[RMDB]
RNA sequence: GGGAACGACUCGAGUAGAGUCGAAAAGAAAGAAAGAAAGCGAUGGUGCCGCACAGUGCUCGGAGAUAUUGUCACGUGCUACCCCAUUCUGAUAUGAUAUCACCCAGCACCACGCGUGUCCAUUGAAGCCUUGGCCAGCAUUCGUGCUGGCCAAGGCAAAAGAAACAACAACAACAAC
Reactivity to 2A3 in 0.01 (KOAc 150mM, MgCl2 10mM, bicine 150mM(pH8.5), 24C), signal-to-noise 1, nucleotides 027 to 126: g080a010a120a010g220a150a020a000g080a090a090a050g030c050g020a020u000g040g000u220g090c000c000g080c000a050c050a020g000u000g020c030u000c110g000g000a130g000a000u000a020u020u050g020u020c000a010c140g080u070g050c030u200a130c000c030c000c000a070u070u000c010u070g000a000u000a060u130g060a000u000a000u030c020a060c000c000c040a000g030c010a020c020c000a000c100g100c000g000u260g020u010c000c000a000u000u050g000a130a030

An RNA of 177 nucleotides, treated with 2A3 and read out base by base. 2A3 is a SHAPE reagent: it acylates the 2'-hydroxyl of flexible nucleotides of all four kinds. The RNA was probed in 150 mM KOAc, 10 mM MgCl2 and 150 mM bicine (pH 8.5) at 24 C.